[RMDB]
RNA sequence: GGGAACGACUCGAGUAGAGUCGAAAAGAUAUGGAAUCAGAUCUCCGUCGAAGAACGCUUUCGGAAACGAAAGCGGGAGAUACGGAUCUCUGAUUCCUAAGUCAAAACCGGUGCUUCGGCACCGGAACAAGUGUAUAUGGUUCGCCAUAUACACUUGAAAAGAAACAACAACAACAAC
Reactivity to 2A3 in 0.01 (KOAc 150mM, MgCl2 10mM, bicine 150mM(pH8.5), 24C), signal-to-noise 6, nucleotides 027 to 126: g020a010u070a040u140g010g010a010a000u000c010a000g000a020u010c020u000c060c010g050u070c100g110a230a100g030a110a020c010g000c010u000u000u000c010g030g000a070a050a050c010g010a000a020a000g000c020g000g000g000a050g000a020u140a030c030g000g010a010u010c020u020c000u030g000a000u000u000c000c000u000a060a010g040u020c020a010a020a070a130c000c000g000g010u000g000c020u060u100c180g160g000c000a000c010c000g000g000a000a010
Reactivity to DMS in 0.01 (KOAc 150mM, MgCl2 10mM, bicine 150mM(pH8.5), 24C), signal-to-noise 8, nucleotides 027 to 126: g000a030u000a300u010g000g010a010a010u000c000a000g010a020u010c150u000c000c000g020u000c110g020a130a100g010a300a180c000g000c000u000u000u010c000g010g000a090a100a160c010g010a000a000a010g000c000g010g000g000a120g000a120u010a010c010g000g000a010u000c170u000c010u000g000a010u000u000c000c000u000a010a060g000u000c030a090a040a090a170c010c000g000g010u000g000c000u000u010c200g020g010c010a010c000c000g010g000a030a080

The record gives the reactivity of an RNA of 177 nucleotides to 2A3 and DMS. It was measured as part of the RMDB library TTRDEL. The RNA was probed in 150 mM KOAc, 10 mM MgCl2 and 150 mM bicine (pH 8.5) at 24 C. For DMS the reverse transcriptase was MarathonRT.